RNA sequence: GGGAACGACUCGAGUAGAGUCGAAAAUUGUGGUUCGGGCAUUCUUAGAGCGGAGGAGACUGCGUGAGGCUGGUUUCACAGAGCAGCGUCCACCUCCCGCUUUCGACGGUGGAAGGAUCACGGGCCGGUGCCUUCUGAGCCCACUAUGACCUAAUAACAGUAUCCUAUGGUUCGCCAUAGGAUACUGAAAAGAAACAACAACAACAAC
Reactivity to DMS in 0.01 (KOAc 150mM, MgCl2 10mM, bicine 150mM(pH8.5), 24C), signal-to-noise 1, nucleotides 027 to 156: u000u000g010u000g020g010u000u010c020g000g000g010c010a060u010u010c090u010u010a050g010a060g050c050g000g010a300g030g000a090g020a050c010u010g080c010g000u010g010a060g050g000c020u020g030g010u000u000u050c150a090c100a100g010a080g030c030a100g000c030g030u000c010c020a150c010c010u000c030c020c010g000c030u000u000u000c110g000a050c220g000g000u000g000g020a080a090g010g000a100u000c040a040c070g000g020g030c080c070g040g010u000g040c060c010u000u000c050u010g010a190g040c010c010c040a040c040u000a050u000g010a150c000c020u000a070a100u000a110a300
Reactivity to 2A3 in 0.01 (KOAc 150mM, MgCl2 10mM, bicine 150mM(pH8.5), 24C), signal-to-noise 2, nucleotides 027 to 156: u070u070g020u050g000g000u050u040c040g000g040g000c040a040u000u060c100u140u170a020g030a000g040c030g010g010a000g020g030a020g020a070c120u220g020c080g100u060g000a070g110g030c020u070g000g130u130u150u230c200a200c000a000g020a010g050c020a000g020c000g080u050c010c020a160c040c000u020c000c040c040g000c000u000u020u040c020g020a040c080g040g020u060g050g030a070a070g050g020a040u170c030a010c110g000g050g010c030c020g020g020u040g050c000c000u120u020c090u160g030a050g000c000c030c010a010c030u020a050u140g070a060c010c030u100a100a100u090a150a050